[RMDB]
RNA sequence: GGGAACGACUCGAGUAGAGUCGAAAAGAUAUGGAGCUCCAGUUCAAUGACGCAUAUCCGAUCGGAAACGAUCGGAGUAUGUAAGACAGAACUUAAGCUCCUAAGUCAAAAGUGACCUUCGGGUCACCUAAUAUACUAUCUUCGGAUAGUAUAUUAGAAAAGAAACAACAACAACAAC
Reactivity to 2A3 in 0.01 (KOAc 150mM, MgCl2 10mM, bicine 150mM(pH8.5), 24C), signal-to-noise 6, nucleotides 027 to 126: g010a010u020a020u090g000g000a010g000c010u020c080c060a000g020u010u000c070a140a190u300g300a200c300g000c020a000u000a010u010c000c000g000a000u000c010g000g010a020a020a010c010g000a010u010c000g000g000a000g010u010a000u000g000u010a050a040g120a060c080a050g010a010a000c000u020u020a020a000g000c000u000c010c000u010a030a010g010u010c010a050a040a070a160g000u010g010a000c010c000u020u060c300g170g000g000u010c000a000c000
Reactivity to DMS in 0.01 (KOAc 150mM, MgCl2 10mM, bicine 150mM(pH8.5), 24C), signal-to-noise 9, nucleotides 027 to 126: g000a020u000a160u010g000g000a020g020c000u000c090c210a030g020u000u000c000a100a140u000g020a150c300g010c000a010u000a040u000c000c000g010a010u000c000g010g000a040a030a070c000g010a010u000c000g010g000a010g010u000a000u000g010u000a090a140g010a180c140a080g000a020a010c000u000u000a050a010g010c000u000c000c000u000a000a070g000u000c010a100a090a110a150g010u000g000a010c000c000u000u010c240g030g010g010u000c000a000c010